[RMDB]
RNA sequence: GGGAACGACUCGAGUAGAGUCGAAAAUAACUUUUUUUAUUUGUAUUCGAACUAGUCCAAGCCGAUUCUCAAAAUCAUAUAAAAUCAUUUACACCUUGGUCAUGGUAGCUAAGAAUAUUGUAUCUAAACAUCUCUCUAUAUUCGUAUAGAGAGAUGUAAAAGAAACAACAACAACAAC
Reactivity to 2A3 in 0.01 (KOAc 150mM, MgCl2 10mM, bicine 150mM(pH8.5), 24C), signal-to-noise 7, nucleotides 027 to 126: u060a010a020c020u110u060u070u060u040u100u110a140u150u120u120g070u010a080u000u050c000g020a030a020c020u010a050g070u000c010c000a020a000g010c030c030g110a130u050u010c050u010c020a070a100a100a110u070c050a040u080a030u120a160a110a030a050u090c030a020u070u050u060a040c040a040c010c000u030u030g040g000u020c040a080u060g070g010u040a030g030c030u060a080a040g040a090a040u070a040u060u110g030u020a070u000c020u030a040a080
Reactivity to DMS in 0.01 (KOAc 150mM, MgCl2 10mM, bicine 150mM(pH8.5), 24C), signal-to-noise 4, nucleotides 027 to 126: u010a020a080c060u010u000u010u020u020u020u010a020u030u010u030g000u010a080u000u000c020g000a100a050c060u000a050g000u020c010c080a070a060g010c090c040g010a100u000u000c030u000c060a090a050a100a060u010c080a070u010a120u010a060a040a110a040u030c050a050u040u000u040a060c100a060c080c050u010u010g010g000u000c040a030u000g010g020u020a070g010c060u000a040a080g010a070a050u010a090u000u000g000u000a050u000c020u000a060a170
Structure probing data (2A3 and DMS) for a 177-nucleotide construct. It was measured as part of the RMDB libraries RFM100 and RFMREP. The RNA was probed in 150 mM KOAc, 10 mM MgCl2 and 150 mM bicine (pH 8.5) at 24 C. DMS adducts were read by reverse transcription with MarathonRT. Values cover nucleotides 27 to 126.